[RMDB]
RNA sequence: GGGAACGACUCGAGUAGAGUCGAAAACGGAAGCAUUAAAACCAUUCGAGCUAGUCAAUGCGUGGCGUGUCUCUCCGCAGCGUGUUGGCGAAUGUAGAGAGUGACUAAGCAUGUAGUACCGAGGAUGAUAAGAGCAAUUCGUUCGCGAAUUGCUCAACGUCAGGAAAUACUUCGGUAUUUCCUGACGAAAAGAAACAACAACAACAAC
Reactivity to DMS in 0.01 (KOAc 150mM, MgCl2 10mM, bicine 150mM(pH8.5), 24C), signal-to-noise 2, nucleotides 027 to 156: c040g020g020a170a140g010c040a070u020u000a110a040a020a070c040c020a100u020u000c030g000a160g030c020u010a140g030u000c030a030a040u010g010c000g010u000g010g070c010g010u000g030u000c120u000c050u010c140c010g010c020a070g010c000g010u030g010u000u000g020g030c030g000a030a030u010g000u000a040g000a280g000a050g020u000g020a060c040u010a080a190g030c040a040u010g020u000a090g030u000a090c030c040g020a130g020g000a100u000g040a130u000a030a170g010a030g000c040a010a030u000u010c000g030u000u010c290g070c030g000a010a020u000u000g000c000u000c020a010a020
Reactivity to 2A3 in 0.01 (KOAc 150mM, MgCl2 10mM, bicine 150mM(pH8.5), 24C), signal-to-noise 4, nucleotides 027 to 156: c030g030g010a070a010g030c050a070u090u090a080a050a040a080c020c020a020u050u070c030g030a040g070c040u070a040g030u030c000a010a020u010g030c020g020u030g060g000c060g000u080g090u030c040u000c010u010c110c000g010c020a000g010c010g010u040g010u010u010g010g000c000g000a040a000u080g030u040a030g020a010g000a010g110u030g000a030c030u080a070a000g070c030a040u080g040u080a030g020u030a050c040c040g000a030g070g020a040u090g020a050u110a230a120g000a000g000c010a000a000u010u000c000g020u060u080c190g000c000g120a000a000u010u000g000c000u010c000a000a010
Source information:
An RNA of 207 nucleotides, treated with DMS and 2A3 and read out base by base. For DMS, 4,376 sequencing reads were counted. The reactions ran in a buffer of 150 mM KOAc, 10 mM MgCl2 and 150 mM bicine (pH 8.5), at 24 C. 2A3 adducts were read by reverse transcription with SuperScript II with manganese. For DMS the reverse transcriptase was MarathonRT. The 2A3 profile rests on 3,246 reads.